[RMDB]
RNA sequence: GGGAACGACUCGAGUAGAGUCGAAAAGAAGAGAAGUGAGUAAACGCCUAUUCGGUAUAAGCACAGCCCGUCAAAAGGCGUGCGGCGAGGGCACCUGAAGCUGUGCUUAUAACUGGGCCCUCGAAGAAGGGCCACUCAGUUUCGACUGAGUGGCCCUAAAAGAAACAACAACAACAAC
Reactivity to DMS in 0.01 (KOAc 150mM, MgCl2 10mM, bicine 150mM(pH8.5), 24C), signal-to-noise 2, nucleotides 027 to 126: g000a120a020g020a050g000a110a100g000u000g040a060g040u030a040a110a060c060g000c020c020u000a070u020u010c050g000g010u030a000u040a050a020g000c030a010c030a030g000c020c040c000g050u040c220a080a030a140a140g020g040c000g010u000g040c130g030g030c060g000a020g030g000g040c000a030c000c040u000g000a170a160g000c000u060g000u000g000c000u020u050a080u050a090a190c080u000g030g000g000c020c030c000u030c010g030a110a140g000a150
Reactivity to 2A3 in 0.01 (KOAc 150mM, MgCl2 10mM, bicine 150mM(pH8.5), 24C), signal-to-noise 2, nucleotides 027 to 126: g120a010a000g070a010g000a030a110g050u020g130a000g010u100a090a300a000c000g000c000c000u090a100u110u080c020g000g000u050a050u060a150a010g020c000a020c010a040g070c000c000c000g000u060c060a230a040a000a000g000g010c040g000u030g040c080g060g000c030g000a000g070g000g010c130a260c090c020u040g000a050a000g000c020u010g040u050g000c000u010u090a130u010a140a040c020u040g010g000g000c000c000c020u010c000g000a060a000g080a000